The record gives the reactivity of an RNA of 177 nucleotides to DMS and 2A3. The data come from the RNA Mapping Database (RMDB), library OK2TRN. The reactions ran in a buffer of 150 mM KOAc, 10 mM MgCl2 and 150 mM bicine (pH 8.5), at 24 C.
RNA sequence: GGGAACGACUCGAGUAGAGUCGAAAAAUGCGCGCAUAUAUAUAUAUGCGAUAAUAGCGAUAUAUUAUAUAAUACGCUAUGCGUAUGCGGCGCGCAUAUAUGCGGCGCGCAUAGCGUAUUAUGCGUAUCAGAAAUAGCAAUUCGUUGCUAUUUCUGAAAAAGAAACAACAACAACAAC
Reactivity to DMS in 0.01 (KOAc 150mM, MgCl2 10mM, bicine 150mM(pH8.5), 24C), signal-to-noise 4, nucleotides 027 to 126: a110u000g010c010g010c000g000c070a040u010a020u000a140u020a110u020a020u000a010u000g010c010g010a040u000a040a060u000a100g000c040g000a120u010a080u010a010u010u000a040u000a050u000a020a020u000a010c000g000c010u000a010u000g000c010g020u010a080u000g030c060g020g010c040g010c090g020c240a050u010a040u000a080u000g010c010g000g020c010g010c010g000c000a000u000a000g010c010g010u000a000u000u000a010u010g030c010g010u000a100
Reactivity to 2A3 in 0.01 (KOAc 150mM, MgCl2 10mM, bicine 150mM(pH8.5), 24C), signal-to-noise 3, nucleotides 027 to 126: a000u080g000c060g020c010g020c050a040u050a010u060a000u010a010u020a010u030a050u290g010c000g010a010u080a140a110u060a060g010c000g010a010u020a010u000a020u300u120a100u040a010u010a160a000u000a010c000g000c000u000a000u010g000c010g020u050a090u300g030c050g150g020c050g000c000g020c130a000u070a010u000a010u130g020c040g050g000c010g020c010g000c000a000u000a000g000c000g000u000a000u000u000a000u000g000c020g010u010a060
Source information: 2A3 adducts were read by reverse transcription with SuperScript II with manganese.